[RMDB]
RNA sequence: GGGAACGACUCGAGUAGAGUCGAAAAGAAAGAAAGAAUUCUCACCCAUCAGCACAGAAUUUUUCGCUAACAGAAACCUCAAAACAAUGUAAGUGAAUUGUUUUGUGUAGAUGGUGGAAAUGAGCAAAUUUCAUACGACGUUCGCGUCGUAUGAAAUAAAAGAAACAACAACAACAAC
Reactivity to 2A3 in 0.01 (KOAc 150mM, MgCl2 10mM, bicine 150mM(pH8.5), 24C), signal-to-noise 6, nucleotides 027 to 126: g060a030a070a010g120a030a110a010g080a040a100u100u030c030u030c030a030c030c010c000a000u000c010a020g010c000a000c000a000g010a000a010u010u000u010u000u000c010g000c010u010a050a010c000a010g110a150a100a060c070c070u290c130a080a140a080a100c080a080a120u060g000u000a040a020g010u010g000a000a000u020u000g010u000u010u000u000g010u000g000u010a080g010a080u030g000g040u080g030g040a060a110a060u140g010a020g020c080a020a090
Reactivity to DMS in 0.01 (KOAc 150mM, MgCl2 10mM, bicine 150mM(pH8.5), 24C), signal-to-noise 3, nucleotides 027 to 126: g000a050a090a070g010a120a020a090g030a090a070u020u010c000u000c050a200c080c030c010a000u000c000a300g000c000a000c000a010g030a000a010u000u000u000u000u000c000g020c000u030a100a040c020a030g000a040a130a120c150c130u020c160a100a090a080a080c190a070a110u010g000u030a040a000g020u000g020a000a040u000u000g000u000u000u000u020g000u000g020u000a090g000a050u000g000g000u000g000g020a080a090a040u020g000a040g050c130a050a100
Chemical mapping of a 177-nucleotide RNA with 2A3 and DMS. The RNA was probed in 150 mM KOAc, 10 mM MgCl2 and 150 mM bicine (pH 8.5) at 24 C. For 2A3 the reverse transcriptase was SuperScript II with manganese. The 2A3 profile rests on 4,099 reads. DMS adducts were read by reverse transcription with MarathonRT.